[RMDB]
RNA sequence: GGGAACGACUCGAGUAGAGUCGAAAAAUAAAUGAAUUGAGACAAUGAUCUGUGUAUAUUUGGAAGAAAUAAACUUCCCAUCUGCUAUAGGAAAGCAGACAAAGCUUUGGAAAGAGGUGAAAGCUGAGAGCAUGGAUGGGAUUUUGAGAAGUGAAUACGAUGACCGAGUAUUCGUACUCGGUCAUCGAAAAGAAACAACAACAACAAC
Reactivity to 2A3 in 0.01 (KOAc 150mM, MgCl2 10mM, bicine 150mM(pH8.5), 24C), signal-to-noise 1, nucleotides 027 to 156: a000u050a010a060a010u090g070a030a070u110u130g060a060g030a040c050a030a080u100g020a050u020c120u020g060u000g060u020a040u040a100u230u150u140g050g000a060a040g020a090a130a030u110a000a070a010c040u020u010c000c010c000a010u000c030u040g000c020u040a000u040a200g070g140a020a100a000g020c000a010g020a010c060a010a120a000g040c000u120u110u020g030g080a080a050a020g070a030g030g020u080g040a010a000a000g000c010u040g040a000g000a000g110c000a020u080g000g000a000u000g020g040g000a000u020u070u050u150g080a160g050a100a000g050u180g090a080a060u250a050
Chemical mapping of a 207-nucleotide RNA with 2A3. It was measured as part of the RMDB library OK3TST. For 2A3, 564 sequencing reads were counted. 2A3 adducts were read by reverse transcription with SuperScript II with manganese. The reactions ran in a buffer of 150 mM KOAc, 10 mM MgCl2 and 150 mM bicine (pH 8.5), at 24 C.